Chemical mapping of a 177-nucleotide RNA with 2A3 and DMS. The RNA was probed in 150 mM KOAc, 10 mM MgCl2 and 150 mM bicine (pH 8.5) at 24 C. Reactivities are given for positions 27 through 126.
[RMDB]
RNA sequence: GGGAACGACUCGAGUAGAGUCGAAAAGAUAUGGAGAGAGCGAUAAGCUGGGUAUCGGAAACGAUAUUAGCUUUUGACGCUUUAACUCCUAAGUCAAAAGAAUGUAUUGCUUCGGCAAUACAUUCAACUUGCAAAUAGACUUCGGUCUAUUUGCAAGAAAAGAAACAACAACAACAAC
Reactivity to 2A3 in 0.01 (KOAc 150mM, MgCl2 10mM, bicine 150mM(pH8.5), 24C), signal-to-noise 2, nucleotides 027 to 126: g020a020u060a020u110g010g000a030g000a010g010a000g000c020g080a120u070a230a030g010c030u090g150g000g070u010a000u000c010g000g030a060a040a030c020g010a020u000a000u030u030a000g000c000u050u170u050u290g200a090c020g000c000u060u070u060a150a100c000u000c000c020u020a110a020g030u050c030a000a030a130a020g000a000a000u000g000u010a000u000u000g000c010u060u050c200g080g000c000a010a000u000a000c000a000u010u000c000a000a000
Reactivity to DMS in 0.01 (KOAc 150mM, MgCl2 10mM, bicine 150mM(pH8.5), 24C), signal-to-noise 3, nucleotides 027 to 126: g010a020u010a280u010g000g000a020g010a090g000a020g000c000g030a160u010a030a000g040c010u000g010g000g010u010a020u000c010g010g000a120a050a150c010g030a010u010a020u000u000a010g010c000u000u010u000u010g010a200c060g010c000u010u000u030a120a080c000u000c000c010u030a070a140g000u010c040a100a100a130a200g010a000a010u000g000u000a010u000u000g010c000u010u030c210g030g000c000a010a000u000a000c000a000u000u000c000a020a100